Annotation: The record gives the reactivity of an RNA of 207 nucleotides to DMS and 2A3. Conditions: 150 mM KOAc, 10 mM MgCl2 and 150 mM bicine (pH 8.5), 24 C.
RNA sequence: GGGAACGACUCGAGUAGAGUCGAAAACGGCAGAAAAGCAAACUUGACCACCAAGGAUAAAAGAGAUCUUAUCCAAGGAUGCAAAAGAUAAUCUCACUUUUGACACCCACUGAUCUCGAACUUAAAGAAAACCGAGACUACUUCGGUAGUCUCGGAACUCUCCAUCAUUGUUCGCAAUGAUGGAGAGAAAAGAAACAACAACAACAAC
Reactivity to DMS in 0.01 (KOAc 150mM, MgCl2 10mM, bicine 150mM(pH8.5), 24C), signal-to-noise 1, nucleotides 027 to 156: c110g000g040c060a090g020a060a090a090a100g000c050a120a100a100c090u000u000g010a130c050c090a080c020c050a040a290g040g000a100u000a060a080a090a130g000a070g000a080u000c010u000u020a070u000c150c020a060a220g000g010a040u030g010c000a020a020a060a000g000a030u000a070a090u000c110u010c080a080c030u000u000u000u020g010a200c020a020c050c010c000a160c120u000g000a000u000c000u000c020g020a040a140c070u010u000a030a110a180g020a080a070a060a110c000c000g000a090g010a000c020u000a010c000u000u000c300g030g030u000a000g070u000c000u000c000g030g050a040a020
Reactivity to 2A3 in 0.01 (KOAc 150mM, MgCl2 10mM, bicine 150mM(pH8.5), 24C), signal-to-noise 5, nucleotides 027 to 156: c020g050g000c050a050g060a110a120a020a010g040c050a080a080a060c060u110u100g060a100c040c010a020c030c020a050a050g020g020a050u070a080a050a040a020g020a000g000a010u010c020u050u070a030u070c060c040a060a050g020g000a020u060g000c000a000a030a010a010g030a070u140a200a190u160c060u040c110a050c040u040u030u010u000g080a080c000a040c020c010c010a070c090u060g000a020u020c000u010c010g020a070a060c040u150u200a080a090a060g060a050a080a040a010c000c000g000a000g000a000c000u010a010c000u000u030c090g040g010u000a000g000u000c000u000c000g010g000a000a000